[RMDB]
RNA sequence: GGGAACGACUCGAGUAGAGUCGAAAAGAUAUGGAAAUCGAACUACGGUGUACGGGUCGGAAACGACCCAGUACAACAAGCCGCGAUUUCCUAAGUCAAAACCGAUUACCCUUCGGGGUAAUCGGAACAUAAAUUCCGUGUUCGCACGGAAUUUAUGAAAAGAAACAACAACAACAAC
Reactivity to DMS in 0.01 (KOAc 150mM, MgCl2 10mM, bicine 150mM(pH8.5), 24C), signal-to-noise 2, nucleotides 027 to 126: g010a030u000a010u000g010g000a040a000a010u000c000g000a110a040c080u000a300c050g020g040u000g010u000a000c000g000g010g030u010c000g020g010a010a010a040c000g000a010c020c000c000a030g000u000a000c000a160a160c260a160a150g010c010c000g000c000g000a020u000u000u000c000c000u000a010a110g000u000c000a160a040a100a100c000c000g020a010u000u000a000c000c000c010u000u020c270g010g000g000g010u000a000a000u010c000g000g000a060a050
Reactivity to 2A3 in 0.01 (KOAc 150mM, MgCl2 10mM, bicine 150mM(pH8.5), 24C), signal-to-noise 2, nucleotides 027 to 126: g000a010u000a000u020g000g000a020a020a000u010c010g000a070a070c090u230a080c300g010g020u070g020u030a000c000g000g000g000u000c000g000g020a010a000a010c000g000a000c000c030c000a000g000u000a010c000a080a100c090a120a170g060c020c000g060c020g020a000u010u010u000c010c000u020a000a010g000u000c000a000a030a000a220c000c010g010a010u000u000a000c000c010c040u030u070c300g060g010g000g010u010a000a000u000c010g000g000a010a000